This 207-nucleotide RNA was probed chemically with 2A3. For 2A3 the reverse transcriptase was SuperScript II with manganese. The reactions ran in a buffer of 150 mM KOAc, 10 mM MgCl2 and 150 mM bicine (pH 8.5), at 24 C. The data come from the RNA Mapping Database (RMDB), library OK3TST. For 2A3, 467 sequencing reads were counted.

RNA sequence: GGGAACGACUCGAGUAGAGUCGAAAACGAUAGGGAAUGGAUAUCGAUAGAAACAGACUACGUACAGGCUUGCCACAGGUUGGGGUGCAGCCUUAUCGACAAGUACAUGCUCACUCAACAGGUAACCGCAACUCAACCGCUCAAAAUGAAGCGGAUACUCCAUGCCAUCAUUCGUGAUGGCAUGGAGAAAAGAAACAACAACAACAAC
Reactivity to 2A3 in 0.01 (KOAc 150mM, MgCl2 10mM, bicine 150mM(pH8.5), 24C), signal-to-noise 1, nucleotides 027 to 156: c100g000a030u090a010g040g010g110a100a090u090g040g050a020u000a000u070c000g020a040u040a120g090a030a170a000c040a040g040a020c010u040a000c020g120u040a030c030a000g050g000c070u140u120g080c000c010a060c090a110g020g010u020u020g000g000g000g000u050g070c000a000g050c000c010u000u040a020u070c010g020a050c050a020a000g030u000a050c050a120u140g040c000u000c020a080c020u000c000a000a000c000a030g000g000u010a020a020c010c010g020c060a000a050c020u020c030a020a020c000c000g000c000u010c050a140a230a040a090u200g080a140a000g000c000g000g000a000u010a000